[RMDB]
RNA sequence: GGGAACGACUCGAGUAGAGUCGAAAAAGGGUAUAUGUUUGUCGAACGUGUUCGUCGCCGAAGACGGCUUCGUUUACCUGAUCAAGAACCGCGAAGCGAUAAAUCCUAAACUGCUCAAGACUCUUUUGGAUUUGCGUACAAUGUACAAGAAGAAGCGGUAACCAUACGAGUUCGCUCGUAUGGUUACAAAAGAAACAACAACAACAAC
Reactivity to DMS in 0.01 (KOAc 150mM, MgCl2 10mM, bicine 150mM(pH8.5), 24C), signal-to-noise 2, nucleotides 027 to 156: a090g000g000g010u010a060u000a090u020g000u010u000u000g040u000c030g020a100a080c040g000u000g020u000u000c060g040u000c040g070c060c080g010a110a190g020a050c020g000g030c040u030u010c040g030u000u000u000a030c040c050u010g020a170u000c050a070a070g000a070a060c010c050g010c000g030a100a090g000c030g020a060u010a000a000a010u010c000c000u000a050a020a040c020u010g030c030u000c160a110a120g020a090c010u010c030u010u000u000u010g000g010a060u000u000u000g000c040g000u020a070c030a060a070u000g020u000a110c040a090a090g020a150a050g040a110a180g020c030g000
Reactivity to 2A3 in 0.01 (KOAc 150mM, MgCl2 10mM, bicine 150mM(pH8.5), 24C), signal-to-noise 4, nucleotides 027 to 156: a000g090g020g020u070a060u010a040u110g100u020u120u080g080u060c050g030a040a070c120g020u030g070u210u150c070g050u050c050g060c170c120g060a070a000g070a020c030g000g000c020u020u030c000g010u000u030u010a030c010c010u020g000a020u120c080a090a050g030a070a020c010c000g000c030g100a060a000g020c000g000a010u050a090a050a010u030c000c000u020a010a020a050c040u080g040c020u030c180a100a210g060a300c050u010c010u080u040u040u020g020g020a030u040u010u030g020c020g010u020a020c050a090a100u160g020u110a030c050a110a030g100a070a000g040a050a000g150c040g040
The record gives the reactivity of an RNA of 207 nucleotides to DMS and 2A3. The DMS profile rests on 3,332 reads. 2A3 adducts were read by reverse transcription with SuperScript II with manganese. Reactivities are given for positions 27 through 156. In probing experiments dimethyl sulfate is read out at A N1 and C N3, which are open when not base-paired.